[RMDB]
RNA sequence: GGGAACGACUCGAGUAGAGUCGAAAACGGCAGUGAUCGCGCUGGCCCUGUUGCCGAUCUCCUGGCAGCUCGGCGUGGCUGCACUGGCCGGCGUGCCGUUGCUGCUGGGGGCGCUGUGGGCCUCCGCCCGCCCCACUGGAUUCGUCCAGUGGGGCGGAAAAGAAACAACAACAACAAC
Reactivity to 2A3 in 0.01 (KOAc 150mM, MgCl2 10mM, bicine 150mM(pH8.5), 24C), signal-to-noise 1, nucleotides 027 to 126: c020g060g020c050a030g110u010g130a160u170c100g000c000g000c100u030g030g030c040c000c020u160g100u250u080g010c070c050g070a200u040c000u050c010c000u020g030g070c000a000g000c000u000c000g000g010c020g030u050g180g000c010u020g000c050a140c210u200g110g000c090c020g000g020c020g040u050g000c010c000g060u080u070g000c000u040g000c020u060g000g000g010g010g010c000g000c010u090g090u100g210g000g010c030c000u020c000c020g030c030